[RMDB]
Source information:
This 177-nucleotide RNA was probed chemically with 2A3 and DMS. The DMS profile rests on 2,648 reads. DMS adducts were read by reverse transcription with MarathonRT. Conditions: 150 mM KOAc, 10 mM MgCl2 and 150 mM bicine (pH 8.5), 24 C. The 2A3 profile rests on 2,856 reads.

RNA sequence: GGGAACGACUCGAGUAGAGUCGAAAAGAUAUGGAGCACCCAAGGGAGCUGCAUAAGGUUCGGAAACGAACCUGCAGCGAAGAACUUGGUGCUCCUAAGUCAAAAGAAGGUGACUUCGGUCACCUUCCACGUGAAGAGUCUUCGGACUCUUCACGUGAAAAGAAACAACAACAACAAC
Reactivity to 2A3 in 0.01 (KOAc 150mM, MgCl2 10mM, bicine 150mM(pH8.5), 24C), signal-to-noise 1, nucleotides 027 to 126: g000a030u020a020u080g000g010a000g010c020a060c030c260c140a110a010g020g040g060a300g040c010u040g020c010a080u100a300a150g040g010u010u000c000g000g000a010a040a020c000g000a020a000c030c000u000g000c000a000g040c000g040a020a080g020a000a020c010u000u010g000g020u010g010c000u010c000c000u000a010a000g000u000c020a030a010a090a110g000a000a000g020g000u010g040a010c000u100u210c300g000g000u000c000a000c000c000u000u000c000
Reactivity to DMS in 0.01 (KOAc 150mM, MgCl2 10mM, bicine 150mM(pH8.5), 24C), signal-to-noise 3, nucleotides 027 to 126: g000a020u000a190u020g000g000a030g020c000a020c230c090c140a010a020g030g010g000a070g030c000u010g030c010a110u030a280a060g010g000u000u000c000g010g000a050a040a080c010g010a000a010c000c030u000g000c000a000g000c020g010a100a160g000a090a210c000u000u000g000g020u000g010c010u000c000c000u000a000a080g000u010c010a120a110a110a170g020a000a010g000g020u000g010a020c000u000u020c250g010g000u000c000a000c000c010u000u000c000